[RMDB]
RNA sequence: GGGAACGACUCGAGUAGAGUCGAAAAGAACGGCAGAGAGCCGAGAAAUGAGACGAGGUAGAGAGCGCGCUCUACCAAAAGGUGUGUGUAAAAACGCACGUGUAGGCGCGGCUACACACCUCAAGAAGGCCUCAGUAUAUUUCGAUAUACUGAGGCCAAAAGAAACAACAACAACAAC
Reactivity to DMS in 0.01 (KOAc 150mM, MgCl2 10mM, bicine 150mM(pH8.5), 24C), signal-to-noise 2, nucleotides 027 to 126: g020a130a100c040g000g020c000a130g030a260g040a170g000c000c000g000a070g000a120a100a100u040g000a140g000a120c150g000a020g010g010u040a130g000a170g010a050g040c030g000c030g000c000u030c030u000a000c020c160a050a090a120a050g000g000u000g000u000g000u000g000u020a000a040a120a060a070c010g000c010a010c030g010u000g000u000a040g000g000c060g010c000g000g060c010u050a000c040a100c070a040c080c000u030c000a030a070g000a220a150
Reactivity to 2A3 in 0.01 (KOAc 150mM, MgCl2 10mM, bicine 150mM(pH8.5), 24C), signal-to-noise 2, nucleotides 027 to 126: g040a090a020c010g000g000c040a040g080a000g020a050g300c000c000g020a000g030a030a180a010u290g000a110g020a050c050g010a040g020g050u050a050g060a020g000a040g140c000g000c000g000c010u080c020u040a000c010c020a000a060a060a000g190g000u010g000u000g000u020g030u050a070a060a030a060a040c000g030c020a050c060g090u220g000u000a000g010g000c000g000c000g090g060c020u050a000c020a010c000a000c000c000u000c000a000a020g000a020a000